[RMDB]
Source information
This 207-nucleotide RNA was probed chemically with DMS and 2A3. For DMS, 1,257 sequencing reads were counted. 2A3 adducts were read by reverse transcription with SuperScript II with manganese. Values cover nucleotides 27 to 156. The reactions ran in a buffer of 150 mM KOAc, 10 mM MgCl2 and 150 mM bicine (pH 8.5), at 24 C.

RNA sequence: GGGAACGACUCGAGUAGAGUCGAAAAAGCGAAACGGCGUCCAUCGUACCGCGAUUUCACUGAAAAAUGAAAGCUGAGACUCAGUGCUCGCGGUGCAAAUGCGGUCCUUAUAUCAUCUGUCACAAACAACGGAAAAUAUUUGGAACAGAGACAAUGGGGCUUCUAUAAUGUUCGCAUUAUAGAAGCCAAAAGAAACAACAACAACAAC
Reactivity to DMS in 0.01 (KOAc 150mM, MgCl2 10mM, bicine 150mM(pH8.5), 24C), signal-to-noise 1, nucleotides 027 to 156: a170g030c020g000a040a090a070c030g000g000c070g050u010c030c020a170u010c070g050u000a050c030c020g030c000g030a080u000u000u000c050a040c020u000g000a000a020a070a160a100u000g010a120a110a110g050c200u000g000a170g020a120c250u000c030a050g030u000g020c300u010c020g000c000g040g030u000g050c020a020a040a040u000g010c060g000g000u000c000c010u000u000a080u000a030u000c060a300u000c000u000g020u000c020a300c100a170a160a090c040a070a130c020g010g030a030a200a050a060u000a020u000u000u000g000g020a030a050c000a050g010a180g000a020c010a070a100u010g000g010
Reactivity to 2A3 in 0.01 (KOAc 150mM, MgCl2 10mM, bicine 150mM(pH8.5), 24C), signal-to-noise 4, nucleotides 027 to 156: a000g100c080g040a110a060a010c000g110g000c030g010u000c020c000a050u100c040g000u010a000c010c000g010c000g010a000u060u190u180c010a010c000u020g060a070a050a050a060a090u200g040a180a110a040g090c140u120g060a020g030a130c040u010c030a000g010u000g010c020u000c000g000c000g000g010u000g000c010a010a030a020u130g000c060g020g000u030c020c000u080u050a060u000a020u070c050a030u010c020u030g020u050c050a030c060a110a120a020c050a070a080c080g050g070a050a040a030a040u090a080u010u030u060g030g000a040a040c020a040g070a040g060a050c030a040a050u290g020g000